[RMDB]
RNA sequence: GGGAACGACUCGAGUAGAGUCGAAAAGCACUGCCUGUUUAUUGUGGUCGUUAAUGUCAAAACCAUAAAACCCGCGUUGGGUCGUGGAAGUUCUAUGAAACCGUAUCAUAGGAUAUGGGCGACGCAGCUAUAAUAAUAUAUUCGUAUAUUAUUAUAGAAAAGAAACAACAACAACAAC
Reactivity to DMS in 0.01 (KOAc 150mM, MgCl2 10mM, bicine 150mM(pH8.5), 24C), signal-to-noise 1, nucleotides 027 to 126: g030c040a060c040u030g010c080c040u000g030u000u020u020a090u040u040g050u000g010g040u000c030g040u040u050a090a050u030g000u000c090a100a060a000a000c000c000a000u000a000a000a010a030c000c000c010g000c010g000u000u000g010g000g010u000c000g070u000g010g000a120a300g000u010u030c020u030a000u000g000a010a060a140c230c210g030u020a090u000c010a030u020a010g000g000a010u000a050u000g000g010g000c010g010a020c000g010c000a050g010

Notes: Structure probing data (DMS) for a 177-nucleotide construct. Reactivities are given for positions 27 through 126. Source: RMDB library OK1LIB, as collected in RNAgym.